Overview
This 177-nucleotide RNA was probed chemically with 2A3 and DMS.

RNA sequence: GGGAACGACUCGAGUAGAGUCGAAAAUAAAACACGUAACGUGAGCACAGUCGGUAGUGCAGCAGCACCGAAACCUGCAGCGAAAGGGAUCAAGACCCUGUUCGCGCAAAAACCGAAGAAAAAAAAACAGUGCAUAUGAGUUCGCUCAUAUGCACUGAAAAGAAACAACAACAACAAC
Reactivity to 2A3 in 0.01 (KOAc 150mM, MgCl2 10mM, bicine 150mM(pH8.5), 24C), signal-to-noise 1, nucleotides 027 to 126: u120a010a070a030a010c020a000c070g090u210a270a000c070g030u040g050a040g020c000a010c000a050g070u040c000g000g010u010a010g020u070g030c010a010g030c000a000g010c010a060c050c090g070a030a020a020c020c020u000g030c000a050g010c010g000a010a000a000g000g010g000a020u160c120a130a000g150a160c000c000c000u040g280u060u000c000g000c000g000c030a000a070a030a000a000c010c000g000a020a080g040a000a060a010a010a010a000a020a000a010
Reactivity to DMS in 0.01 (KOAc 150mM, MgCl2 10mM, bicine 150mM(pH8.5), 24C), signal-to-noise 2, nucleotides 027 to 126: u000a120a090a070a140c020a030c030g040u020a090a100c180g060u020g010a100g010c000a040c000a030g000u000c000g000g020u010a050g020u000g000c000a120g000c020a040g020c070a130c040c020g000a110a090a150c160c010u000g000c010a120g010c000g000a000a070a020g020g000g010a070u010c150a090a300g010a060c030c000c000u000g020u000u000c010g010c000g040c060a050a000a030a070a070c020c020g000a010a120g030a060a000a000a000a020a050a030a040a120
DMS adducts were read by reverse transcription with MarathonRT. The 2A3 profile rests on 1,503 reads. It was measured as part of the RMDB library M2PK90.